[RMDB]
Description:
Chemical mapping of a 177-nucleotide RNA with 2A3 and DMS. For DMS the reverse transcriptase was MarathonRT. The 2A3 profile rests on 46,656 reads.
RNA sequence: GGGAACGACUCGAGUAGAGUCGAAAAGAUAUGGAUACAGGUAGAGGCCGAGACUAUUCGGAAACGAACGAAUCUCGGAACUACCUUGUACUGUAUCCUAAGUCGUAGUCACUGUUCGCAGUGACAAGUAUUACACUUACUUCGGUAAGUGUAAUACAAAAGAAACAACAACAACAAC
Reactivity to 2A3 in 0.01 (KOAc 150mM, MgCl2 10mM, bicine 150mM(pH8.5), 24C), signal-to-noise 9, nucleotides 027 to 126: g010a010u050a010u110g010g030a040u000a010c000a000g020g090u170a020g020a040g130g000c010c010g010a000g010a020c120u110a060u020u010c010g050g000a140a100a060c040g030a040a010c040g100a190a300u000c000u000c000g000g010a020a000c000u010a010c010c000u000u040g010u160a010c000u000g000u000a000u000c000c010u030a100a030g080u060c040g050u050a040g000u000c000a000c010u010g100u100u090c300g000c160a000g000u000g000a000c000a000a010
Reactivity to DMS in 0.01 (KOAc 150mM, MgCl2 10mM, bicine 150mM(pH8.5), 24C), signal-to-noise 9, nucleotides 027 to 126: g010a020u000a250u000g000g010a090u000a010c000a010g000g010u010a300g010a080g040g010c000c000g010a010g020a020c090u000a300u000u000c000g010g000a110a080a170c020g010a010a020c120g010a070a090u000c000u000c000g000g000a070a040c020u000a220c000c010u000u010g020u000a140c010u000g000u000a000u000c000c020u010a050a110g000u000c070g000u010a120g010u000c000a010c000u000g000u010u010c220g020c010a010g020u000g010a000c000a040a090